[RMDB]
Chemical mapping of a 207-nucleotide RNA with 2A3 and DMS. 2A3 adducts were read by reverse transcription with SuperScript II with manganese. The RNA was probed in 150 mM KOAc, 10 mM MgCl2 and 150 mM bicine (pH 8.5) at 24 C.

RNA sequence: GGGAACGACUCGAGUAGAGUCGAAAACAUGGUGGCAAGUACGGCGCGAUAUUGCUCCACCUGCAAUAGAAGCGUAGACAUCAACUGUAGCGAGAGCUACUCAACUUAUGGACCUUAGAGCAUGCGAAGACGACAGGUCCUGUCGGAAUUCGCUAGACGCUAGCAGUAUGUUCGCAUACUGCUAGCGAAAAGAAACAACAACAACAAC
Reactivity to 2A3 in 0.01 (KOAc 150mM, MgCl2 10mM, bicine 150mM(pH8.5), 24C), signal-to-noise 3, nucleotides 027 to 156: c120a090u120g010g000u000g020g040c040a070a060g090u070a070c190g020g010c010g000c000g030a030u030a010u060u010g010c020u060c060c000a140c100c060u070g010c020a000a000u080a030g130a140a000g010c010g020u010a010g050a140c050a050u080c040a010a080c090u110g000u010a010g030c000g020a010g010a010g100c000u010a000c010u050c060a090a080c020u090u120a050u130g080g050a050c000c000u080u120a080g020a030g130c080a080u070g000c010g010a010a010g020a020c000g000a000c030a000g060g140u090c040c040u000g000u010c000g020g030a060a050u010u010c010g000c020u010a020g010a070
Reactivity to DMS in 0.01 (KOAc 150mM, MgCl2 10mM, bicine 150mM(pH8.5), 24C), signal-to-noise 1, nucleotides 027 to 156: c040a040u010g010g040u020g000g040c020a060a050g130u020a060c130g040g040c040g000c000g040a290u000a070u000u010g010c000u000c040c160a070c120c040u000g000c010a070a020u000a010g010a230a260g020c130g010u060a060g020a170c070a100u000c060a050a040c060u030g030u000a010g020c060g020a300g000a260g000c000u010a020c000u040c070a010a180c020u000u010a050u000g010g010a100c040c040u000u010a090g000a210g000c040a120u040g000c030g010a140a090g020a230c000g050a090c070a010g000g000u000c080c030u000g010u050c020g000g000a090a260u000u000c010g000c020u000a010g000a300